RNA sequence: GGGAACGACUCGAGUAGAGUCGAAAAACCUUAUUUUGAGAAGCUGAGGGAUUUGGCCCAUAGAAGCUACAGCAACCGACUUUAAAUAGCACGGUGCUAAUACCAACGAGCAACUCGAAUGAUAAGUAAAACGUUGACAAGUUCGCUUGUCAACGAACUAAGAAGAAGGGUUCGCCCUUCUUCUUAGAAAAGAAACAACAACAACAAC
Reactivity to DMS in 0.01 (KOAc 150mM, MgCl2 10mM, bicine 150mM(pH8.5), 24C), signal-to-noise 1, nucleotides 027 to 156: a080c120c000u000u000a090u000u000u000u010g000a150g000a080a270g000c030u000g030a080g000g010g020a130u010u010u010g030g000c020c020c000a200u000a170g000a110a060g020c010u010a130c120a070g010c000a040a050c020c010g030a080c020u010u000u010a150a110a100u000a020g020c010a090c020g000g000u010g000c000u020a060a170u000a110c020c030a000a170c080g000a100g040c000a030a300c020u010c000g040a070a070u020g050a190u020a060a090g000u000a040a040a050a160c000g000u000u000g000a090c000a000a010g000u000u000c300g000c030u000u000g020u000c000a000a010c000g000a000a010
Reactivity to 2A3 in 0.01 (KOAc 150mM, MgCl2 10mM, bicine 150mM(pH8.5), 24C), signal-to-noise 3, nucleotides 027 to 156: a000c030c000u070u100a100u030u040u040u060g030a010g000a070a000g010c030u060g020a070g080g040g000a060u050u120u200g080g010c050c010c010a030u080a080g120a050a020g000c050u050a040c040a000g000c000a010a040c000c010g060a040c010u060u040u150a130a220a220u140a170g000c030a020c030g000g000u000g000c000u000a000a000u040a050c020c010a030a040c070g100a010g040c000a010a060c010u010c030g020a020a040u040g040a030u050a130a030g030u050a000a120a070a000c000g010u000u000g000a000c000a000a000g000u020u040c160g090c170u000u000g000u000c000a000a000c000g000a000a010

This 207-nucleotide RNA was probed chemically with DMS and 2A3. 2A3 adducts were read by reverse transcription with SuperScript II with manganese. The 2A3 profile rests on 1,454 reads. It was measured as part of the RMDB library M2RFPK. Values are in units of 0.01, from 0 to 300, in steps of 10.